[RMDB]
RNA sequence: GGGAACGACUCGAGUAGAGUCGAAAACUCUCCGAUAGUGACCGCGAGGCAAUCACGGCGUCGGACACGUUCAGCGACAAGUUGCUUGACGAGGAUCCGUGUUGGGCGGAUUACGUCAUGGUCGGCACCAAGACGGUCAACGGCAAAGAGGUGCCGAUCCUUAAGAGAGGUUCGCCUCUCUUAAGGAAAAAGAAACAACAACAACAAC
Reactivity to DMS in 0.01 (KOAc 150mM, MgCl2 10mM, bicine 150mM(pH8.5), 24C), signal-to-noise 3, nucleotides 027 to 156: c040u000c050u010c010c020g020a100u000a070g020u010g030a060c000c000g050c060g020a130g000g040c150a150a120u010c000a040c040g000g070c030g040u000c040g030g020a070c030a080c080g030u010u000c040a130g000c050g040a140c060a140a240g020u010u000g030c000u000u010g010a080c020g010a150g010g000a040u000c010c000g060u000g020u030u010g030g020g010c010g010g020a050u010u000a070c000g020u010c010a080u000g040g020u000c010g010g000c020a090c000c000a070a300g010a060c030g010g000u000c130a080a120c050g010g000c050a060a080a120g010a160g000g020u010g000c000c000g010a010
Reactivity to 2A3 in 0.01 (KOAc 150mM, MgCl2 10mM, bicine 150mM(pH8.5), 24C), signal-to-noise 5, nucleotides 027 to 156: c020u030c010u010c020c000g020a050u060a080g190u120g130a100c030c020g020c050g040a040g120g080c160a110a140u070c020a020c080g030g030c020g000u050c020g010g020a040c040a030c100g080u120u120c040a050g040c040g080a090c080a110a130g050u060u080g040c040u030u090g010a010c000g020a040g180g000a020u000c010c010g020u070g060u210u300g140g070g000c000g010g000a000u010u020a020c020g010u010c010a030u040g050g000u000c000g000g000c010a000c010c010a030a010g070a040c040g000g090u120c110a200a100c040g020g000c070a050a110a060g060a040g030g000u000g000c000c000g000a010